[RMDB]
RNA sequence: GGGAACGACUCGAGUAGAGUCGAAAAACCAUCACAUUUGAUGCCACAUCUCAGCAAACUCAUGUGUUCUUCCAUAAAUGAGGUCAGAUGUGAAAAACAUGGUAAAACGGUUAGCGAAGCGACAAAAUAUGCACGAAAAUUUCGAUUUUCGUGCAUAAAAAGAAACAACAACAACAAC
Reactivity to DMS in 0.01 (KOAc 150mM, MgCl2 10mM, bicine 150mM(pH8.5), 24C), signal-to-noise 3, nucleotides 027 to 126: a050c000c000a110u040c020a030c040a020u000u000u010g010a070u000g000c020c040a130c130a180u000c060u000c110a180g000c050a110a050a160c030u000c030a020u000g010u030g000u000u010c100u000u040c050c040a070u030a030a090a060u010g000a020g030g000u000c000a020g010a010u000g000u010g000a040a040a040a060a080c250a100u000g000g040u000a040a070a080a070c120g010g010u000u000a070g000c140g000a080a020g030c090g020a090c120a040a040a090a110
Reactivity to 2A3 in 0.01 (KOAc 150mM, MgCl2 10mM, bicine 150mM(pH8.5), 24C), signal-to-noise 3, nucleotides 027 to 126: a000c020c000a040u040c030a000c010a000u000u040u050g060a070u030g010c030c020a110c040a150u060c070u100c100a060g030c050a020a010a110c000u040c040a030u030g060u010g040u180u070c040u050u050c080c030a070u080a140a160a010u030g000a020g010g050u000c020a010g010a020u000g000u050g040a020a000a000a000a010c020a040u080g020g030u110a000a000a000a080c050g020g020u020u050a050g030c020g080a050a000g020c030g110a080c090a010a080a020a010
Description
An RNA of 177 nucleotides, treated with DMS and 2A3 and read out base by base. For DMS the reverse transcriptase was MarathonRT. For DMS, 4,065 sequencing reads were counted. 2A3 adducts were read by reverse transcription with SuperScript II with manganese. The 2A3 profile rests on 1,609 reads. Reactivities are given for positions 27 through 126. Conditions: 150 mM KOAc, 10 mM MgCl2 and 150 mM bicine (pH 8.5), 24 C. Source: RMDB library OK1LIB, as collected in RNAgym.